[RMDB]
RNA sequence: GGGAACGACUCGAGUAGAGUCGAAAACAGUGCUUUAAGAGGCUAACACAGAAGGGUAAAGUAAGUCUCCAUAAAACCCAGAGAAGAGACUGGAAAGCUCCUCUUUGGAUCCUGUCUGGAGUCACAACACUAUUGAGAUCUUCGGAUCUCAAUAGUGAAAAGAAACAACAACAACAAC
Reactivity to 2A3 in 0.01 (KOAc 150mM, MgCl2 10mM, bicine 150mM(pH8.5), 24C), signal-to-noise 8, nucleotides 027 to 126: c030a030g040u050g070c020u060u070u070a100a000g030a010g080g000c020u070a100a010c030a010c010a050g070a090a050g060g030g010u100a110a070a010g020u020a050a020g010u010c000u000c010c010a030u160a080a110a050a050c000c000c030a010g010a000g010a080a010g010a000g030a070c040u070g050g090a100a030a030g000c010u010c000c000u010c000u010u000u000g020g000a030u060c010c020u080g070u070c030u020g030g010a010g020u050c030a020c030a070a060
Reactivity to DMS in 0.01 (KOAc 150mM, MgCl2 10mM, bicine 150mM(pH8.5), 24C), signal-to-noise 4, nucleotides 027 to 126: c050a090g000u000g000c030u000u010u010a080a090g010a090g000g000c060u000a080a120c070a080c090a040g000a070a040g010g000g000u010a040a040a050g010u020a080a040g000u010c010u000c030c020a050u020a060a080a130a150c160c010c020a020g010a040g010a060a030g000a020g000a040c000u000g010g020a110a130a090g000c020u000c000c030u000c010u010u000u000g000g000a060u000c060c050u000g000u000c140u000g000g000a030g020u020c040a080c160a060a120

Structure probing data (2A3 and DMS) for a 177-nucleotide construct. The RNA was probed in 150 mM KOAc, 10 mM MgCl2 and 150 mM bicine (pH 8.5) at 24 C.